[RMDB]
RNA sequence: GGGAACGACUCGAGUAGAGUCGAAAAGAGCGCUGGUCGAGGCCGGAAUGGACGUCGCCCGAAUGAACUUCAGCCACGGCGACUACGACGAUCACAAGGUCGCCUAUGAGCGGGUCCGGGUAGCCUCGGUAGGACCGUCAUUCGUGACGGUCCUACCAAAAGAAACAACAACAACAAC
Reactivity to DMS in 0.01 (KOAc 150mM, MgCl2 10mM, bicine 150mM(pH8.5), 24C), signal-to-noise 1, nucleotides 027 to 126: g000a080g000c110g000c030u000g070g010u020c000g020a060g010g030c030c060g000g020a200a180u000g030g020a080c050g020u000c020g000c000c000c010g030a090a130u030g000a120a190c020u000u050c110a180g030c030c030a150c280g000g000c010g010a070c000u000a060c300g020a110c210g000a050u000c150a080c110a070a270g030g000u000c000g000c000c010u000a080u060g000a120g020c000g010g010g010u000c020c010g020g000g000u000a050g040c000c020u000c020